[RMDB]
RNA sequence: GGGAACGACUCGAGUAGAGUCGAAAACGGACUGACCGAGACGAGACGACGUCGCCCUCUCAACGCCGUAUACGAAACUGGAGAAGAACUGUUCUCAGGAACAUGCGACAAUAGAGGUGUUGGUGGAAAUCAGUCGUCCAUUCGUGGACGACUGAUUAAAAGAAACAACAACAACAAC
Reactivity to DMS in 0.01 (KOAc 150mM, MgCl2 10mM, bicine 150mM(pH8.5), 24C), signal-to-noise 1, nucleotides 027 to 126: c120g000g000a170c030u000g030a010c040c000g000a200g060a060c060g000a090g000a070c080g100a010c030g000u020c000g030c030c000c000u010c030u120c020a080a000c120g000c000c000g000u000a010u010a040c240g000a120a060a030c230u000g050g000a020g000a030a030g060a150a060c180u000g010u050u000c000u000c030a050g000g000a060a030c000a040u000g020c080g000a120c000a020a300u000a000g050a050g020g010u000g030u000u000g000g000u000g100g000a060
Reactivity to 2A3 in 0.01 (KOAc 150mM, MgCl2 10mM, bicine 150mM(pH8.5), 24C), signal-to-noise 2, nucleotides 027 to 126: c000g000g040a030c030u120g040a060c000c000g040a040g020a000c000g050a070g000a050c040g030a020c000g030u020c030g060c000c010c000u080c000u050c010a020a000c020g030c000c000g110u120a040u110a170c160g040a040a140a080c030u110g040g040a100g030a020a060g030a160a030c120u180g040u100u000c030u000c000a040g040g060a010a000c050a050u070g000c060g040a030c110a060a030u070a040g050a000g080g000u060g070u060u030g040g000u020g030g010a010